Annotation
The record gives the reactivity of an RNA of 177 nucleotides to 2A3 and DMS. For DMS the reverse transcriptase was MarathonRT. Reactivities are given for positions 27 through 126. The RNA was probed in 150 mM KOAc, 10 mM MgCl2 and 150 mM bicine (pH 8.5) at 24 C. 2A3 adducts were read by reverse transcription with SuperScript II with manganese. The DMS profile rests on 1,043 reads.
[RMDB]
RNA sequence: GGGAACGACUCGAGUAGAGUCGAAAAGAUAUGGACCGAGCUAUGUUGUCAGCCUUGUGGAUCGGAAACGAUCCAUGGGCUUGGAUUUACAUAGGAGUCCUAAGUCAAAGGGCGCUUCGGCGCCCAAGUCGCAUAGAGUGUUCGCACUCUAUGCGACAAAAGAAACAACAACAACAAC
Reactivity to 2A3 in 0.01 (KOAc 150mM, MgCl2 10mM, bicine 150mM(pH8.5), 24C), signal-to-noise 1, nucleotides 027 to 126: g010a040u110a030u160g000g000a000c010c090g060a070g160c000u000a010u000g010u020u000g010u080c020a000g000c000c040u220u300g020u040g040g000a000u000c000g030g000a060a040a070c000g020a000u030c040c000a000u000g010g000g020c000u020u100g020g010a020u300u290u070a040c000a010u000a010g000g050a060g000u050c000c010u030a140a040g050u050c010a000a090a180g010g000g000c030g060c070u070u290c300g110g010c000g000c000c000c020a000a000
Reactivity to DMS in 0.01 (KOAc 150mM, MgCl2 10mM, bicine 150mM(pH8.5), 24C), signal-to-noise 1, nucleotides 027 to 126: g000a100u000a300u000g000g010a000c020c100g020a110g000c000u010a000u000g010u000u000g000u010c010a020g040c010c020u000u050g090u000g000g010a030u000c000g000g000a120a080a180c010g000a020u000c010c000a000u010g000g000g000c000u020u010g000g000a000u010u000u000a040c000a000u000a000g020g010a090g000u000c000c000u020a050a100g000u000c040a090a140a140g010g000g010c010g040c000u000u000c150g000g000c010g020c000c010c000a000a010